[RMDB]
RNA sequence: GGGAACGACUCGAGUAGAGUCGAAAACCUCACUACAUUUUACUGUUCCUAAAGAAUUUGUGACAGGUACAGUAAAACGUAUUGCAAGGUUUAUCAGUUCCUAUAAACAUGUAAAUAACAAUAUAUGAAAAGCAAAGACUGUUCGCAGUCUUUGCAACAAUGAAUGCUUCUUCGGAAGCAUUCAUUGAAAAGAAACAACAACAACAAC
Reactivity to DMS in 0.01 (KOAc 150mM, MgCl2 10mM, bicine 150mM(pH8.5), 24C), signal-to-noise 2, nucleotides 027 to 156: c010c010u000c020a040c050u000a010c000a020u000u000u000u000a000c020u000g020u000u000c000c000u000a100a150a170g000a110a160u000u000u000g030u000g030a250c190a040g000g020u000a000c000a010g000u000a000a010a030a050c030g060u000a000u000u010g020c020a140a030g000g060u000u000u010a080u010c070a170g020u000u000c020c010u010a130u000a070a120a160c070a120u000g020u000a050a120a150u000a100a160c090a040a120u010a150u010a060u020g000a090a070a060a120g040c010a020a030a030g010a020c010u000g030u010u010c300g080c030a040g000u000c000u000u000u010g020c000a030a060
Reactivity to 2A3 in 0.01 (KOAc 150mM, MgCl2 10mM, bicine 150mM(pH8.5), 24C), signal-to-noise 6, nucleotides 027 to 156: c000c000u010c010a010c000u010a000c000a030u000u000u000u020a000c000u000g000u010u060c010c000u090a130a170a050g150a250a300u210u270u280g140u080g040a060c080a090g010g000u000a000c000a000g000u000a000a000a000a000c010g000u000a000u000u020g010c090a070a030g030g010u040u000u020a160u110c040a020g000u010u000c000c000u030a070u170a080a100a010c020a010u060g050u100a060a160a110u230a190a070c040a120a050u110a020u050a040u200g070a120a100a010a030g000c000a000a000a000g000a000c000u010g030u080u100c230g000c090a000g000u000c000u000u000u000g000c000a000a000
Chemical mapping of a 207-nucleotide RNA with DMS and 2A3. Values cover nucleotides 27 to 156. For 2A3, 3,659 sequencing reads were counted.